Annotation:
Chemical mapping of a 177-nucleotide RNA with DMS and 2A3. Values cover nucleotides 27 to 126. For 2A3 the reverse transcriptase was SuperScript II with manganese. For DMS the reverse transcriptase was MarathonRT. The DMS profile rests on 3,008 reads.
RNA sequence: GGGAACGACUCGAGUAGAGUCGAAAAUAGCUCGAAAUUGGUAACCAUUGUCAGACAGUAUCACUUCGGGGACUCCGAACGUCAUGAACAAUUCGUUUUCUAGAUACUUUAUGACGACACUGGAAUAGUAUACUGCAGUGUUCGCACUGCAGUAUACAAAAGAAACAACAACAACAAC
Reactivity to DMS in 0.01 (KOAc 150mM, MgCl2 10mM, bicine 150mM(pH8.5), 24C), signal-to-noise 4, nucleotides 027 to 126: u010a120g000c020u000c040g020a040a070a130u000u000g000g010u010a080a110c040c050a090u010u000g010u000c080a080g000a150c230a040g020u000a030u000c020a170c130u000u000c020g010g010g000g030a150c160u000c020c010g030a020a040c150g010u010c150a050u010g000a000a020c050a090a160u020u010c050g020u000u000u010u010c110u010a150g000a010u010a030c150u000u000u000a080u010g000a050c030g000a090c160a060c100u010g000g010a060a120u010a100
Reactivity to 2A3 in 0.01 (KOAc 150mM, MgCl2 10mM, bicine 150mM(pH8.5), 24C), signal-to-noise 3, nucleotides 027 to 126: u020a000g020c010u000c010g060a050a090a140u130u090g070g020u120a060a040c020c030a050u050u070g030u030c020a020g020a110c010a020g000u010a010u040c040a030c040u010u010c000g000g000g060g160a170c070u040c050c000g010a070a030c070g040u040c050a050u150g010a030a020c030a060a100u140u070c030g030u080u090u030u040c030u030a040g000a020u010a010c000u020u060u040a080u050g030a010c030g010a010c010a030c070u040g010g060a010a030u050a110